[RMDB]
RNA sequence: GGGAACGACUCGAGUAGAGUCGAAAAGGCACAGCCCAAACCGAACAUCCGGGGGUAACUCCGGAUGGAUGUGGUGUUGUAGGACCCUGCCUAAUGCCGUGGAACGAAGCCGAAGUGGUCUGGAACGUUGGUUAGUAUCGUUCGCGAUACUAACCAAAAAAGAAACAACAACAACAAC
Reactivity to DMS in 0.01 (KOAc 150mM, MgCl2 10mM, bicine 150mM(pH8.5), 24C), signal-to-noise 4, nucleotides 027 to 126: g000g000c050a050c150a140g030c000c020c010a090a160a030c040c010g000a180a220c020a000u010c000c000g010g010g000g010g000u050a130a110c010u000c000c000g000g010a020u000g000g010a030u020g010u000g000g020u000g000u010u010g010u000a060g020g010a080c020c010c100u030g000c000c010u000a070a110u030g000c030c010g020u000g020g010a080a100c050g020a050a210g000c020c020g000a090a080g010u010g000g000u010c040u000g000g030a070a070c140g030
Reactivity to 2A3 in 0.01 (KOAc 150mM, MgCl2 10mM, bicine 150mM(pH8.5), 24C), signal-to-noise 1, nucleotides 027 to 126: g040g000c020a020c030a010g020c000c010c000a020a160a010c010c000g010a000a000c010a000u010c010c000g010g020g000g000g000u050a120a060c000u000c010c000g000g000a000u000g000g000a030u100g120u220g000g040u070g080u100u080g050u080a040g010g000a020c110c010c000u020g010c010c000u040a100a050u080g000c000c000g010u050g020g000a040a040c040g010a010a000g020c000c000g000a050a000g090u110g080g020u010c060u010g050g010a030a020c040g040
Source information
Structure probing data (DMS and 2A3) for a 177-nucleotide construct. The RNA was probed in 150 mM KOAc, 10 mM MgCl2 and 150 mM bicine (pH 8.5) at 24 C. It was measured as part of the RMDB libraries RFM100 and RFMREP.